[RMDB]
RNA sequence: GGGAACGACUCGAGUAGAGUCGAAAACCGAAAGGGUGACCUCCGCGACUCGCAAAACAAGGAGAGGUCUCAAAAGCUAGUGGCUCCUAGCUGCUGCUCGUGCAGUGAGUGCGACAUCACCAAAUUGCGGGAAAUCCCUAAAGCUUUGACUACCAAGGAAGUACUUUAACUUCGGUUAAAGUACUUCAAAAGAAACAACAACAACAAC
Reactivity to 2A3 in 0.01 (KOAc 150mM, MgCl2 10mM, bicine 150mM(pH8.5), 24C), signal-to-noise 5, nucleotides 027 to 156: c000c000g040a150a040a000g080g010g010u030g020a060c000c020u040c020c020g040c030g070a050c010u030c060g080c050a040a110a080a080c060a180a030g040g010a050g030a010g010g030u010c020u000c050a060a080a000a010g010c010u020a000g010u070g120g000c010u040c020c010u020a030g010c010u000g000c010u010g000c010u040c160g170u200g010c010a010g020u030g050a040g040u050g020c010g040a030c020a080u090c020a010c030c010a000a060a150u080u060g010c020g000g000g020a060a040a080u080c010c000c000u110a130a110a000g020c000u070u100u150g040a070c040u080a100c100c030a040a030g100
Reactivity to DMS in 0.01 (KOAc 150mM, MgCl2 10mM, bicine 150mM(pH8.5), 24C), signal-to-noise 2, nucleotides 027 to 156: c030c000g020a040a140a110g010g000g000u020g000a090c040c020u000c020c040g000c050g010a120c030u030c030g000c060a150a040a090a240c130a080a220g010g010a090g000a070g010g030u000c010u000c070a120a060a110a130g000c000u000a000g020u010g010g030c030u010c110c040u000a060g010c010u000g000c030u010g000c020u010c140g000u000g010c040a170g010u000g010a060g010u020g000c080g010a100c130a100u000c010a100c030c010a060a120a140u000u000g050c020g000g020g010a050a090a080u000c090c030c010u000a070a080a150g000c040u000u000u000g020a140c080u010a200c060c050a010a300g020
The record gives the reactivity of an RNA of 207 nucleotides to 2A3 and DMS. The reactions ran in a buffer of 150 mM KOAc, 10 mM MgCl2 and 150 mM bicine (pH 8.5), at 24 C. It was measured as part of the RMDB library ARCHII. For 2A3 the reverse transcriptase was SuperScript II with manganese.